[RMDB]
RNA sequence: GGGAACGACUCGAGUAGAGUCGAAAAUCUUGCGUGAUCCUGCACUAUUGAAAAGUCUUUAUCAAAAAUAGAUGAAACUUUUUCAGGGUUCAACAUUUAGAGGCUUUUCUCAUAUUCUAAAAAUAAAAUCCAGGCAGUAUUUCGAUACUGCCUGGAUAAAAGAAACAACAACAACAAC
Reactivity to 2A3 in 0.01 (KOAc 150mM, MgCl2 10mM, bicine 150mM(pH8.5), 24C), signal-to-noise 1, nucleotides 027 to 126: u160c090u090u220g060c010g020u070g130a130u170c040c000u090g010c000a010c050u120a130u220u140g010a010a010a010a010g010u000c070u000u050u030a000u070c010a110a130a140a000a000u260a220g070a000u030g030a090a000a040c000u020u080u040u290u270c140a060g100g000g000u090u020c030a100a030c000a010u020u200u040a010g030a000g010g060c000u010u010u010u010c030u040c010a000u120a090u260u210c060u300a240a000a000a000a000u010a040a220a000
The record gives the reactivity of an RNA of 177 nucleotides to 2A3.
For 2A3, 247 sequencing reads were counted.
Source: RMDB library OK1LIB, as collected in RNAgym.